[RMDB]
RNA sequence: GGGAACGACUCGAGUAGAGUCGAAAAUGCGUAAUUCUAAUGGUGCUUGCAUUUGGAACGCUGCUGCAUAUAUGAAACUCUCGGAUGCACUUAAACGACAGAUUCGCAUUGCAUGCCGUAAGUGUAAGGAUAUCAUUCGGUUCGCCGAAUGAUAUCCAAAAGAAACAACAACAACAAC
Reactivity to 2A3 in 0.01 (KOAc 150mM, MgCl2 10mM, bicine 150mM(pH8.5), 24C), signal-to-noise 1, nucleotides 027 to 126: u060g010c030g020u040a050a100u090u000c010u070a050a040u120g030g020u040g030c010u040u050g000c020a030u010u040u090g050g030a050a000c020g000c020u050g000c040u000g010c040a000u100a000u010a030u150g080a110a060a050c010u010c000u000c010g000g030a030u030g010c020a020c020u060u100a130a070a020c000g060a010c010a050g040a180u040u050c050g000c030a020u020u040g020c020a000u080g110c010c010g020u010a020a040g030u020g030u040a110a020
Reactivity to DMS in 0.01 (KOAc 150mM, MgCl2 10mM, bicine 150mM(pH8.5), 24C), signal-to-noise 2, nucleotides 027 to 126: u030g030c000g000u000a060a040u010u010c050u020a030a120u010g000g020u000g010c070u000u010g030c000a040u000u010u010g010g010a110a030c090g010c090u010g000c030u000g010c020a040u010a110u000a050u030g000a120a040a080c040u010c100u010c040g070g010a120u000g010c010a040c070u000u000a030a080a100c090g010a050c030a040g000a100u010u000c040g030c040a060u000u000g010c030a090u000g020c010c040g040u000a020a050g050u000g000u010a060a070